[RMDB]
RNA sequence: GGGAACGACUCGAGUAGAGUCGAAAAGGAGAUUGGUGUGAAAGGAGAAAAUCUGCUUCUCCCCGACUUAUGGCUAGAUUUCCUACAACUCAGCCCCAUCUUCCAGCGCAAGCUUGCUGCCGUUAUUGCCUGUGUCCGACGCCUGCGGACUCAGGCCGUUGGUUACAAGCUUCGGCUUGUAACCAACAAAAGAAACAACAACAACAAC
Reactivity to 2A3 in 0.01 (KOAc 150mM, MgCl2 10mM, bicine 150mM(pH8.5), 24C), signal-to-noise 1, nucleotides 027 to 156: g120g000a000g020a110u110u210g020g010u100g020u070g130a090a060a040g070g020a030g080a070a090a000a080u070c070u110g080c070u070u000c000u010c030c030c020c040g050a050c070u080u180a090u160g050g040c040u050a010g000a170u020u020u030c010c000u090a100c050a190a030c020u010c110a000g020c000c000c000c000a020u020c020u100u000c020c000a020g000c020g040c050a260a000g000c030u140u200g000c010u100g000c030c000g130u130u160a190u240u150g000c010c000u010g000u010g000u000c010c020g000a010c020g060c040c070u090g010c000g040g000a000c010u030c010a010g000g000c000c010
The record gives the reactivity of an RNA of 207 nucleotides to 2A3. The RNA was probed in 150 mM KOAc, 10 mM MgCl2 and 150 mM bicine (pH 8.5) at 24 C. 2A3 adducts were read by reverse transcription with SuperScript II with manganese. Reactivities are given for positions 27 through 156.